An RNA of 177 nucleotides, treated with 2A3 and DMS and read out base by base. Conditions: 150 mM KOAc, 10 mM MgCl2 and 150 mM bicine (pH 8.5), 24 C. DMS adducts were read by reverse transcription with MarathonRT. 2A3 adducts were read by reverse transcription with SuperScript II with manganese.
[RMDB]
RNA sequence: GGGAACGACUCGAGUAGAGUCGAAAAGAUGCAUCGGGGCUGACCGGUGUCAUAGGUAUCGACACCGAAGCUCGCACCGCCGACGUGGCCGGUAUGUGCACCUACGAGGACCUGGUAGCCGCAACCAUCGUACUGGUCAGUUCGCUGACCAGUACGAAAAAGAAACAACAACAACAAC
Reactivity to 2A3 in 0.01 (KOAc 150mM, MgCl2 10mM, bicine 150mM(pH8.5), 24C), signal-to-noise 1, nucleotides 027 to 126: g020a020u110g010c000a030u050c140g080g010g050g000c040u060g000a050c000c020g000g040u000g010u010c010a020u110a070g300g040u260a060u240c160g010a000c000a000c000c000g000a030a000g010c000u000c010g020c030a010c000c030g010c040c010g080a140c100g030u130g050g010c090c050g000g000u070a110u170g050u000g020c020a020c010c010u020a050c070g060a120g000g070a020c000c020u110g010g100u010a020g000c010c000g010c020a010a040c000c010a060
Reactivity to DMS in 0.01 (KOAc 150mM, MgCl2 10mM, bicine 150mM(pH8.5), 24C), signal-to-noise 2, nucleotides 027 to 126: g030a070u000g000c000a060u000c090g120g050g000g010c020u010g010a150c250c000g000g030u020g010u000c010a100u000a100g000g010u000a090u040c190g000a010c010a040c000c000g100a080a060g000c020u000c040g010c070a040c060c060g010c040c050g000a180c110g000u010g010g020c030c000g010g000u000a030u000g010u000g000c040a030c040c040u000a040c130g000a100g000g000a070c040c020u000g010g000u000a050g040c020c030g000c030a100a110c060c030a070